[RMDB]
RNA sequence: GGGAACGACUCGAGUAGAGUCGAAAAGUGUUUGAACUGUGGACGGCUAAGUCAACGAUAAGUAGCUGUCAUGAACCCCUUAUCAGUGUUUCACCCCCUACACCACCUGUACUGCACAUGCAAAGGCGAUAUGACCGAUGUUCGCAUCGGUCAUAUCAAAAGAAACAACAACAACAAC
Reactivity to 2A3 in 0.01 (KOAc 150mM, MgCl2 10mM, bicine 150mM(pH8.5), 24C), signal-to-noise 5, nucleotides 027 to 126: g020u030g070u040u130u140g060a030a000c030u030g030u050g190g010a010c010g030g000c040u040a050a090g070u080c100a120a060c110g090a100u080a190a060g040u040a010g000c010u020g020u020c030a040u100g020a060a080c010c010c000c000u000u100a100u120c040a050g010u030g080u080u120u060c020a030c000c010c000c000c000u020a010c020a030c030c010a040c000c010u040g020u060a050c020u010g070c030a030c010a100u080g040c030a090a010a070g070g040c030
Reactivity to DMS in 0.01 (KOAc 150mM, MgCl2 10mM, bicine 150mM(pH8.5), 24C), signal-to-noise 3, nucleotides 027 to 126: g010u000g010u000u000u020g020a090a050c040u000g070u030g030g020a020c010g000g010c010u010a040a070g010u020c090a170a110c200g010a050u010a030a050g010u010a030g010c060u010g000u010c000a100u000g000a040a100c060c000c000c060u000u010a070u040c020a080g000u000g000u000u000u020c030a120c050c000c010c000c000u020a090c050a050c000c060a070c080c030u020g010u010a090c070u010g000c030a020c040a040u040g000c060a050a080a070g000g010c130
Notes:
An RNA of 177 nucleotides, treated with 2A3 and DMS and read out base by base. For DMS, 6,249 sequencing reads were counted. It was measured as part of the RMDB library OK1LIB. The reactions ran in a buffer of 150 mM KOAc, 10 mM MgCl2 and 150 mM bicine (pH 8.5), at 24 C.